[RMDB]
RNA sequence: GGGAACGACUCGAGUAGAGUCGAAAAGGAUGAUCUGGGCCCGGCCAGUCAUCCGAAUUAGUACCGGGAUUGCAUCGUCGAGCCGUCAGGGGCGAAGACGAGAACCUGAAAGCACGAAGCACUGGGCGGUGCGAGUGCGAGAUAUAACGCCCAACAAAGGUACUAUCAGUUUCGACUGAUAGUACCUAAAAGAAACAACAACAACAAC
Reactivity to DMS in 0.01 (KOAc 150mM, MgCl2 10mM, bicine 150mM(pH8.5), 24C), signal-to-noise 2, nucleotides 027 to 156: g000g010a010u000g000a030u000c070u000g050g020g000c000c040c010g000g050c010c010a080g020u000c000a010u010c000c010g000a060a040u000u000a110g020u000a050c020c010g000g000g000a130u020u000g020c100a220u000c000g030u000c020g000a300g020c020c010g000u010c080a170g010g020g000g000c000g050a130a190g010a080c010g000a060g010a060a120c030c040u000g010a080a150a190g010c000a050c020g000a220a300g000c060a030c050u000g000g030g030c140g000g040u000g020c030g000a190g030u000g000c030g010a060g020a080u000a090u030a120a090c000g020c000c000c000a120a090c100a160a120
Reactivity to 2A3 in 0.01 (KOAc 150mM, MgCl2 10mM, bicine 150mM(pH8.5), 24C), signal-to-noise 2, nucleotides 027 to 156: g000g000a000u010g000a030u070c030u040g010g000g010c000c000c000g000g000c010c000a000g000u000c000a010u000c000c010g000a010a010u120u090a100g080u110a110c000c000g000g010g010a020u020u130g040c040a070u010c000g020u000c000g020a020g000c000c030g110u140c170a040g000g120g000g090c000g020a040a000g000a000c000g010a010g000a010a020c040c040u130g110a080a070a050g020c000a000c000g050a060a020g010c000a000c060u110g030g000g050c030g000g000u000g000c020g010a030g000u000g000c000g020a010g020a000u160a010u030a100a050c030g020c000c020c010a010a000c030a020a130

This 207-nucleotide RNA was probed chemically with DMS and 2A3. DMS adducts were read by reverse transcription with MarathonRT.